RNA sequence: GGGAACGACUCGAGUAGAGUCGAAAAUCGGGAUGGUCUGGCGACCUGGGACAACUGGAAACAUGUAAACUGUGAUAAGCUGACGACCAUCAUUGAGAGCUCUCUAAACGUUCUGGAGCCCGCUGAAAGGUUAGAGAAGUUUCGACUUCUCUAACCUAAAAGAAACAACAACAACAAC
Reactivity to 2A3 in 0.01 (KOAc 150mM, MgCl2 10mM, bicine 150mM(pH8.5), 24C), signal-to-noise 1, nucleotides 027 to 126: u010c010g000g000g000a010u020g000g010u000c050u030g010g050c040g030a050c030c010u020g000g050g040a010c010a180a060c060u000g080g040a130a080a060c030a030u090g020u150a040a110a170c080u030g000u040g110a080u040a100a080g010c020u020g090a050c090g040a030c000c000a030u040c000a000u020u120g030a100g000a010g050c010u000c000u000c040u100a110a100a000c040g030u100u060c040u050g050g020a040g000c020c010c010g070c000u030g030a180a140
Reactivity to DMS in 0.01 (KOAc 150mM, MgCl2 10mM, bicine 150mM(pH8.5), 24C), signal-to-noise 3, nucleotides 027 to 126: u000c050g000g010g010a040u000g010g020u000c020u010g020g010c070g000a120c110c020u010g020g030g030a090c150a130a100c090u000g000g020a140a110a140c060a030u000g010u020a070a070a120c060u000g000u000g010a130u000a090a180g010c010u000g000a120c110g010a040c010c000a020u010c010a060u020u000g020a060g000a100g010c060u000c010u000c050u000a050a110a200c150g010u000u000c030u010g010g010a070g020c030c020c020g030c080u000g000a100a080

The record gives the reactivity of an RNA of 177 nucleotides to 2A3 and DMS.
For 2A3, 1,202 sequencing reads were counted.
The reactions ran in a buffer of 150 mM KOAc, 10 mM MgCl2 and 150 mM bicine (pH 8.5), at 24 C.
For DMS the reverse transcriptase was MarathonRT.
Values cover nucleotides 27 to 126.